[RMDB]
RNA sequence: GGGAACGACUCGAGUAGAGUCGAAAAGCGCUGAACGUUUUCGAUGAUCGCAAUUUCCAGCGCCACUCGAUCAUCCACAUCGCGCACGAUAACCGGAAUAGUAUCGACACCAGCACGCUGCGAUGCAGUCGUGGCUGGGAUUCGUCCCAGCCACGACAAAAGAAACAACAACAACAAC
Reactivity to 2A3 in 0.01 (KOAc 150mM, MgCl2 10mM, bicine 150mM(pH8.5), 24C), signal-to-noise 2, nucleotides 027 to 126: g010c020g010c050u050g040a120a040c080g130u000u020u180u180c060g010a030u040g000a010u100c010g000c130a120a180u140u030u000c030c000a000g000c010g040c020c010a030c040u010c000g010a030u030c000a000u000c010c020a020c000a020u030c010g040c020g000c030a030c080g020a050u050a080a080c010c060g000g120a040a060u100a070g090u040a020u090c010g030a020c040a050c030c050a030g020c020a000c080g020c040u120g020c020g020a040u050g030c030a010
Reactivity to DMS in 0.01 (KOAc 150mM, MgCl2 10mM, bicine 150mM(pH8.5), 24C), signal-to-noise 2, nucleotides 027 to 126: g000c020g020c020u020g010a100a160c220g020u000u000u000u000c130g000a090u000g020a080u000c010g000c300a090a050u000u000u000c070c080a060g020c030g000c040c050a050c090u000c000g020a000u000c020a040u000c000c220a080c060a100u000c020g040c010g030c060a170c030g000a040u000a050a070c130c030g030g020a080a060u000a110g000u020a030u000c020g020a140c110a070c120c100a090g010c090a020c130g000c030u000g030c040g000a080u000g000c080a020